[RMDB]
About this RNA
This 177-nucleotide RNA was probed chemically with DMS and 2A3. For 2A3 the reverse transcriptase was SuperScript II with manganese. For DMS the reverse transcriptase was MarathonRT. It was measured as part of the RMDB library OK2TST.
RNA sequence: GGGAACGACUCGAGUAGAGUCGAAAAUGGAAGAGAGCGUGCGAUUACUGGAAAUACGCAAUUCAUACAUAUUAUGAACUUUGCGUUGCCGGUCUAACUCUUGCGAAGGGACAUCUUCCGGGGAUCGCGACUACGGUUUGUUCGCAAACCGUAGUCGAAAAGAAACAACAACAACAAC
Reactivity to DMS in 0.01 (KOAc 150mM, MgCl2 10mM, bicine 150mM(pH8.5), 24C), signal-to-noise 2, nucleotides 027 to 126: u000g070g020a030a020g010a020g020a170g000c070g020u020g000c110g000a050u000u000a000c000u000g000g000a060a090a070u000a020c000g010c000a000a040u000u000c000a000u000a020c290a190u010a190u020u000a000u000g000a000a020c300u000u000u020g010c000g040u000u000g000c010c040g000g020u000c120u000a070a120c070u000c000u000u010g000c080g020a160a050g000g020g010a170c110a120u000c020u000u000c000c050g000g000g010g000a120u000c170g000
Reactivity to 2A3 in 0.01 (KOAc 150mM, MgCl2 10mM, bicine 150mM(pH8.5), 24C), signal-to-noise 1, nucleotides 027 to 126: u050g000g000a030a010g020a000g010a040g060c040g030u100g010c040g010a040u000u070a030c000u050g010g000a100a230a150u130a050c000g040c000a000a000u010u000c000a020u000a070c030a020u260a130u230u110a010u040g000a010a010c110u090u050u010g000c000g000u010u020g000c010c000g000g000u010c060u080a090a100c040u000c020u020u080g040c030g060a100a050g130g000g030a000c000a120u000c000u010u000c000c020g000g000g000g000a070u110c120g000